The record gives the reactivity of an RNA of 207 nucleotides to DMS and 2A3.
Reactivities are given for positions 27 through 156.
For DMS the reverse transcriptase was MarathonRT.
Source: RMDB library RNAMAK, as collected in RNAgym.
RNA sequence: GGGAACGACUCGAGUAGAGUCGAAAACGCUGGGCUCGAUGGUAGUUGUCAGCUCCCACUGAAGCGCGCACGGUGGUGAGCUUGGAUUUACGAGAGUAGAGCCUGUGCUGAAGCGCGCACGGCAACCGAAAGGUGCGACCUGGGGCAUUCGUGCCCCGAUAGAGUUUCCAUUCGUGGAAACUCUAUCAAAAGAAACAACAACAACAAC
Reactivity to DMS in 0.01 (KOAc 150mM, MgCl2 10mM, bicine 150mM(pH8.5), 24C), signal-to-noise 2, nucleotides 027 to 156: c080g000c030u010g030g000g020c040u000c010g040a150u030g000g010u000a170g000u010u000g010u010c070a110g030c010u010c000c000c000a040c000u000g000a040a080g040c010g040c010g000c020a300c030g020g030u000g060g030u000g040a020g070c010u010u010g030g010a110u010u020u010a090c030g000a270g000a140g000u000a290g000a050g000c000c010u000g000u010g020c000u010g010a100a090g030c020g000c000g010c000a110c050g020g000c040a100a110c030c030g010a090a150a220g030g010u000g010c040g030a180c070c030u000g040g010g070g000c000a150u000u000c240g020u000g000c000c010c000c000
Reactivity to 2A3 in 0.01 (KOAc 150mM, MgCl2 10mM, bicine 150mM(pH8.5), 24C), signal-to-noise 5, nucleotides 027 to 156: c060g010c000u030g000g010g000c010u000c010g050a090u090g070g050u070a070g030u040u110g130u150c020a000g000c010u020c000c000c000a000c000u020g040a210a040g050c030g000c010g000c040a020c040g010g000u010g000g040u300g040a000g010c010u020u120g060g000a030u080u180u280a060c060g030a120g010a030g160u040a020g010a000g030c000c000u010g000u010g000c020u050g020a100a030g010c020g000c000g010c020a020c030g060g000c050a080a100c040c000g060a110a030a030g040g010u020g030c020g030a050c010c030u040g010g000g000g000c010a020u030u080c140g080u060g000c000c000c000c000